[RMDB]
RNA sequence: GGGAACGACUCGAGUAGAGUCGAAAACGCACGCGUGAGCGUGCGGCUCUGCAUGAGCAGAGCAAGGGCGAGCAACGCGUCACAGCCCCGCUCGAUCGAGAUGUAGAUCGAGCGAAAAGCGCUGUAGCGAGUUGAAGCUACAGACGCAAGACGCGAAGCGUCUGAGGACGUUCGCGUCCUCAGACGCAAAAGAAACAACAACAACAAC
Reactivity to DMS in 0.01 (KOAc 150mM, MgCl2 10mM, bicine 150mM(pH8.5), 24C), signal-to-noise 2, nucleotides 027 to 156: c030g050c010a020c010g030c000g000u030g000a220g030c000g070u020g020c020g000g000c000u000c000u000g040c000a180u020g000a300g030c000a030g000a020g000c070a020a070g000g020g040c010g020a300g000c000a010a050c000g040c000g030u000c020a060c030a300g000c000c020c000c040g000c020u000c000g000a010u030c000g000a300g030a220u020g000u000a110g020a010u010c000g000a020g000c000g000a000a020a020a130g030c030g010c000u000g030u000a020g000c000g000a080g080u000u030g000a070a280g020c000u000a020c000a010g010a090c000g010c010a010a020g000a020c030g000c000g000a120a120
Reactivity to 2A3 in 0.01 (KOAc 150mM, MgCl2 10mM, bicine 150mM(pH8.5), 24C), signal-to-noise 3, nucleotides 027 to 156: c010g020c000a000c000g020c000g030u110g100a020g030c010g010u000g000c000g000g010c000u000c000u000g020c040a180u300g160a060g080c000a000g000a010g000c010a050a080g000g010g010c010g020a070g050c080a130a210c030g010c000g010u000c010a010c020a040g000c000c000c000c000g000c000u000c010g000a000u000c040g010a050g030a300u220g100u140a010g000a000u000c000g000a000g000c000g000a000a010a000a010g000c000g000c000u000g000u000a000g000c010g030a160g190u060u130g140a130a000g000c000u000a000c000a000g040a040c000g000c010a020a080g000a010c000g000c010g000a040a000